RNA sequence: GGGAACGACUCGAGUAGAGUCGAAAACAGGAAGUUUAGAAGGAAAGACUUCAUACUUCUGGCUUAGGCUGUAAGAAAGUAAUUAUAAUUUUGAGUUCUUCCUUUUUUUCAUCUUCAACUUCUACCCUGAUGGGACUCUAUAAUCAUAAUUUUAAAAUAUCGUAUUUAGGUUCGCCUAAAUACGAUAAAAAGAAACAACAACAACAAC
Reactivity to 2A3 in 0.01 (KOAc 150mM, MgCl2 10mM, bicine 150mM(pH8.5), 24C), signal-to-noise 2, nucleotides 027 to 156: c040a000g050g000a000a000g000u000u020u170a040g010a010a010g000g040a040a000a140g010a070c020u070u050c070a080u050a070c000u000u010c000u000g010g010c000u110u040a130g040g100c020u020g090u150a050a110g000a130a050a010g120u110a090a070u300u170a100u100a140a140u120u100u110u210g000a010g010u050u080c040u000u000c000c010u020u060u040u000u000u060u170c040a090u050c020u150u040c020a020a010c010u030u000c010u060a040c010c020c000u000g110a110u150g000g060g060a060c040u120c070u240a140u150a300a090u140c140a030u190a300a130u290u300u230u300a010a230a000a000